[RMDB]
Record summary:
The data come from the RNA Mapping Database (RMDB), library TTRINS. Structure probing data (DMS) for a 177-nucleotide construct.
RNA sequence: GGGAACGACUCGAGUAGAGUCGAAAAGAUAUGGAUUCCUUAAGUGCUUUGUGGCAUUUGGCUAAGACAGAAGGUCGGAAACGACCUUUCGAGCCAUAUGCCACAAAGCUCAAAGGAAUCCUAAGUCCAUAGUUCCACACUUCGGUGUGGAACUAUGAAAAGAAACAACAACAACAAC
Reactivity to DMS in 0.01 (KOAc 150mM, MgCl2 10mM, bicine 150mM(pH8.5), 24C), signal-to-noise 2, nucleotides 027 to 126: g000a050u000a300u000g010g000a010u000u000c000c000u000u020a170a220g010u000g000c010u000u000u000g010u000g000g040c000a020u000u010u000g020g010c000u000a220a110g000a120c300a100g000a000a010g030g020u000c000g000g020a080a140a180c000g000a000c000c000u000u000u000c050g010a020g030c000c000a000u000a010u000g000c000c000a020c000a000a020a020g020c000u000c000a040a060a010g020g010a010a020u000c000c000u000a010a080g000u000c070

For DMS the reverse transcriptase was MarathonRT. For DMS, 1,785 sequencing reads were counted. Values are in units of 0.01, from 0 to 300, in steps of 10. Values cover nucleotides 27 to 126. The RNA was probed in 150 mM KOAc, 10 mM MgCl2 and 150 mM bicine (pH 8.5) at 24 C.